[RMDB]
RNA sequence: GGGAACGACUCGAGUAGAGUCGAAAACUGAAAGUUGCGAGCUGUCAUGUCCAACGCCAGCGCAUAUCCUGCAAUGUAACCAUCCGCGUCCUUGGCGGCAAUGUCGCGACCCUCCUUGCCGAUGAUGUCCAAUUGUUGGAUUCGUCCAACAAUUGGAAAAAGAAACAACAACAACAAC
Reactivity to DMS in 0.01 (KOAc 150mM, MgCl2 10mM, bicine 150mM(pH8.5), 24C), signal-to-noise 4, nucleotides 027 to 126: c020u000g010a080a110a060g010u010u000g000c060g010a120g020c020u010g000u010c060a090u020g000u000c040c080a040a100c100g000c060c040a080g010c100g020c060a080u010a080u010c040c030u000g000c080a080a060u000g010u010a090a110c100c050a080u010c050c040g000c040g000u000c050c040u000u000g010g010c010g000g010c050a040a070u000g000u000c050g010c050g010a110c040c030c010u000c010c020u000u000g020c020c010g010a110u000g000a100u010g010
Reactivity to 2A3 in 0.01 (KOAc 150mM, MgCl2 10mM, bicine 150mM(pH8.5), 24C), signal-to-noise 2, nucleotides 027 to 126: c030u050g050a140a020a050g070u050u060g000c060g000a010g000c030u040g010u110c010a020u060g050u080c020c010a030a000c060g020c010c000a080g020c050g000c060a030u040a080u180c050c010u020g010c040a100a120u130g000u090a080a020c000c000a040u070c030c010g000c000g030u030c020c000u020u030g040g000c010g010g000c000a040a130u120g030u040c040g000c020g060a070c020c000c000u020c000c020u080u040g050c020c040g070a120u190g010a030u170g080